[RMDB]
RNA sequence: GGGAACGACUCGAGUAGAGUCGAAAAUACUACCUUAUACUGCGAUGGAGGGACGGAGAAGUGAAAGCAACACGUACGGACAGAAGUGUACGUCUAAGUGCGUAGGUAUUGGAACUGUAGGCAAAUCCUAAGUAAGGGCUUUCGAGCCCUUACUUAGAAAAGAAACAACAACAACAAC
Reactivity to DMS in 0.01 (KOAc 150mM, MgCl2 10mM, bicine 150mM(pH8.5), 24C), signal-to-noise 5, nucleotides 027 to 126: u020a090c060u020a120c050c010u000u040a060u020a100c050u010g010c040g020a060u000g010g000a080g010g000g010a060c060g020g000a070g000a030a060g020u000g000a080a070a050g010c070a060a080c100a040c050g000u010a040c040g010g000a060c050a060g000a060a080g020u010g030u010a040c060g000u000c060u010a040a100g020u000g010c010g000u010a060g010g030u020a060u010u000g000g020a070a020c080u010g020u000a040g000g010c120a070a040a080u040c120
Reactivity to 2A3 in 0.01 (KOAc 150mM, MgCl2 10mM, bicine 150mM(pH8.5), 24C), signal-to-noise 4, nucleotides 027 to 126: u120a030c010u030a050c000c010u060u030a060u050a090c040u060g050c040g070a060u120g060g010a030g020g030g010a010c020g060g030a050g030a140a030g050u090g120a090a010a020g010c010a000a110c030a010c040g050u080a000c000g040g090a010c030a030g100a120a040g120u050g020u140a050c020g020u000c020u060a130a080g020u040g020c030g000u010a020g030g000u060a040u050u130g000g000a060a020c020u030g020u070a020g030g000c010a030a000a030u060c010